Source information
This 177-nucleotide RNA was probed chemically with DMS and 2A3.
[RMDB]
RNA sequence: GGGAACGACUCGAGUAGAGUCGAAAAGAUAUGGAGGCAUGAGGCAAGGUCACAAUAGCUCGGAAACGAGCUAUGACUGAUGACCCUCCGCUGCCUCCUAAGUCAAACCUUCGCUUCGGCGAAGGAAUCCGAUUACUAGGUUCGCCUAGUAAUCGGAAAAAGAAACAACAACAACAAC
Reactivity to DMS in 0.01 (KOAc 150mM, MgCl2 10mM, bicine 150mM(pH8.5), 24C), signal-to-noise 3, nucleotides 027 to 126: g020a010u010a300u020g000g000a030g010g000c000a000u020g000a030g000g000c200a080a160g010g000u000c000a130c130a300a030u000a010g010c000u000c000g020g020a110a140a300c000g010a000g010c000u000a010u000g030a100c300u000g000a150u000g020a130c300c000c000u000c010c030g010c010u000g010c000c000u000c000c000u000a000a060g000u000c040a080a140a180c000c000u000u000c000g040c000u000u030c230g030g000c010g000a010a000g010g000a030a030
Reactivity to 2A3 in 0.01 (KOAc 150mM, MgCl2 10mM, bicine 150mM(pH8.5), 24C), signal-to-noise 2, nucleotides 027 to 126: g020a030u070a040u160g000g000a020g000g030c000a050u260g020a000g030g050c090a090a190g040g000u010c010a020c040a210a130u010a010g000c000u020c010g000g050a110a120a060c010g000a000g010c000u000a010u010g000a010c020u020g020a180u110g030a080c020c030c000u000c000c010g020c010u010g000c000c000u010c000c000u000a070a000g010u020c000a020a030a180c000c000u000u000c010g010c000u050u050c300g210g020c010g000a010a000g000g000a010a050

The reactions ran in a buffer of 150 mM KOAc, 10 mM MgCl2 and 150 mM bicine (pH 8.5), at 24 C. High 2A3 reactivity points to a flexible backbone, as in loops and unpaired stretches. The DMS profile rests on 1,932 reads.